[RMDB]
RNA sequence: GGGAACGACUCGAGUAGAGUCGAAAAAUUAAAAAAUUAAGCAAAAGACAACCACCUUUCCCGCUGACAAUGGCGUUAUCCCUCUGCACUUCGGUAAUAUGAGGGCACAGUAAAUCCCGCAAGGAUGAUGAUCAACAGGGGUUCGCCCCUGUUGAAACUGUAUUACCUAGUUCGCUAGGUAAUACAGAAAAGAAACAACAACAACAAC
Reactivity to 2A3 in 0.01 (KOAc 150mM, MgCl2 10mM, bicine 150mM(pH8.5), 24C), signal-to-noise 1, nucleotides 027 to 156: a010u060u050a100a000a000a000a000a020u140u130a060a010g010c010a040a020a090a010g090a090c030a030a070c020c000a010c000c020u040u040u010c020c010c010g000c030u010g030a030c070a070a080u110g030g050c030g060u100u070a060u090c000c000c000u000c020u040g010c030a030c070u070u090c120g100g020u070a050a060u060a130u300g000a030g000g000g000c010a010c000a020g000u060a000a120a050u010c000c030c020g070c050a060a000g060g000a010u070g010a050u030g010a000u040c000a000a000c000a000g000g050g000g000u030u060c050g090c010c000c010c050u000g000u000u010g000a010a000a000
Reactivity to DMS in 0.01 (KOAc 150mM, MgCl2 10mM, bicine 150mM(pH8.5), 24C), signal-to-noise 1, nucleotides 027 to 156: a210u010u040a000a020a130a090a040a160u020u010a050a160g020c050a120a040a040a070g010a130c070a140a090c010c000a080c070c040u000u000u000c020c010c030g040c090u000g000a050c070a060a130u010g010g020c080g010u000u000a100u010c010c000c000u000c040u020g000c030a030c050u010u000c160g040g020u010a060a110u020a060u010g000a050g030g010g070c030a030c050a110g000u000a090a080a080u000c000c010c000g000c090a110a090g000g000a090u000g000a160u000g000a130u000c020a000a020c010a030g010g000g040g030u000u000c300g010c000c000c010c040u000g000u010u000g000a000a000a080
Conditions: 150 mM KOAc, 10 mM MgCl2 and 150 mM bicine (pH 8.5), 24 C. This 207-nucleotide RNA was probed chemically with 2A3 and DMS. For 2A3, 992 sequencing reads were counted. For 2A3 the reverse transcriptase was SuperScript II with manganese.